RNA sequence: GGGAACGACUCGAGUAGAGUCGAAAAUUGGAAUGGUGAAAGCAUUUCGGUAAUCAUCGACAGGCCGCGUGAACCUGCGUACAUCUUCACUAACGACAACGUGGUUAAUGGUGACUUCUCCUACACGUUCGCAAGCGAAAAGAGCAUGUACACGACGCAAGAAAACGCGUUUCGACGCGUUUUCUUGAAAAGAAACAACAACAACAAC
Reactivity to 2A3 in 0.01 (KOAc 150mM, MgCl2 10mM, bicine 150mM(pH8.5), 24C), signal-to-noise 2, nucleotides 027 to 156: u120u020g050g030a050a000u030g000g040u080g060a170a070a000g050c070a040u000u060u000c080g000g030u110a090a120u030c160a090u060c020g000a010c000a040g110g000c100c000g000c020g020u020g040a100a140c000c000u010g010c000g020u000a020c010a050u020c000u050u040c010a010c120u080a110a030c020g010a010c040a090a000c000g090u020g050g010u180u290a140a070u090g020g040u000g080a080c060u100u020c040u100c050c000u010a030c020a000c000g010u040u050c060g000c070a070a030g020c040g090a020a080a060a070g060a010g000c020a030u020g030u060a000c050a000c040g120a010c040g070